[RMDB]
RNA sequence: GGGAACGACUCGAGUAGAGUCGAAAAUGGAGUCAUCCGACCGUAUGGAGAAAAUUUCCGACAAGAGGUGAUCCACUGAGGGUUUGCGGAAAAAUCACCUCCAGAGGACCCCUUCAGCGAACGGAAGCAGCAUGCCACUUCGGUGGCAUGAAAAGAAACAACAACAACAAC
Reactivity to DMS in 0.01 (KOAc 150mM, MgCl2 10mM, bicine 150mM(pH8.5), 24C), signal-to-noise 5, nucleotides 027 to 129: u040g040g000a060g030u020c070a050u060c030c030g010a100c010c010g050u050a050u000g020g020a030g060a070a060a050a070u010u020u040c030c020g030a000c210a080a060g020a130g050g010u020g020a070u030c010c020a170c060u040g060a000g050g000g000u040u000u070g080c120g110g040a000a010a000a010a000u020c050a050c010c000u040c060c050a090g000a210g000g040a000c120c020c010c030u030u040c000a060g030c120g000a050a070c040g000g000a060a050g040c030a000g000
Reactivity to 2A3 in 0.01 (KOAc 150mM, MgCl2 10mM, bicine 150mM(pH8.5), 24C), signal-to-noise 6, nucleotides 027 to 129: u090g060g000a030g010u040c030a040u000c010c000g010a030c010c000g050u070a150u120g010g020a010g050a020a070a040a040u110u080u010c020c010g060a060c070a080a050g030a000g050g030u070g030a090u020c030c000a020c070u080g050a140g050g100g010u090u130u140g060c110g030g040a040a180a000a000a000u050c020a050c010c000u010c030c020a050g010a050g030g000a030c000c000c020c000u020u090c040a030g000c000g060a040a030c020g030g000a010a000g030c040a000g020